[RMDB]
RNA sequence: GGGAACGACUCGAGUAGAGUCGAAAAAUAGCUGAUCCUCCGUGCAUCGCCCAUGUGCUACGGUAAGGGUCUCACUUUAAGUGGGCUACACUAAAUAAUCUCCGUCUGGGGUUAGUUAGAAGAGCUUAAUCAGACUAGCUGAAUGGAAGCCUGUUACCUAUCAACUCUGGUUCGCCAGAGUUGAUAGAAAAGAAACAACAACAACAAC
Reactivity to 2A3 in 0.01 (KOAc 150mM, MgCl2 10mM, bicine 150mM(pH8.5), 24C), signal-to-noise 2, nucleotides 027 to 156: a000u170a020g100c060u020g030a040u070c010c000u000c010c010g000u000g030c010a020u030c000g000c000c000c000a000u030g000u000g000c030u090a020c000g010g020u030a110a140g010g000g030u030c000u070c060a140c080u180u260u200a120a010g010u000g010g000g030c000u010a000c020a000c050u020a000a000a110u020a020a020u030c020u000c060c050g070u060c060u060g000g000g020g000u010u000a010g000u020u020a000g010a070a000g010a040g000c030u170u230a010a040u120c020a010g020a040c000u000a010g000c030u030g050a120a070u150g070g070a110a020g000c030c000u050g080u070u060a040c010
Reactivity to DMS in 0.01 (KOAc 150mM, MgCl2 10mM, bicine 150mM(pH8.5), 24C), signal-to-noise 1, nucleotides 027 to 156: a120u000a120g010c060u040g010a060u000c010c010u000c040c010g060u020g090c000a020u000c050g020c010c030c080a110u020g020u010g010c010u020a000c000g010g020u010a060a100g030g000g000u000c010u000c070a080c180u020u000u000a070a060g050u010g000g010g010c000u010a300c060a220c000u000a030a020a020u000a020a020u000c010u000c020c150g000u010c100u010g010g010g030g020u000u000a000g000u010u000a010g040a070a130g000a130g010c080u020u000a070a020u010c040a060g010a130c020u010a080g040c030u020g000a070a180u000g000g000a060a040g040c010c000u000g010u000u000a100c120
Record summary
The record gives the reactivity of an RNA of 207 nucleotides to 2A3 and DMS. The DMS profile rests on 1,883 reads. For 2A3 the reverse transcriptase was SuperScript II with manganese. It was measured as part of the RMDB library ARCHII. The reactions ran in a buffer of 150 mM KOAc, 10 mM MgCl2 and 150 mM bicine (pH 8.5), at 24 C.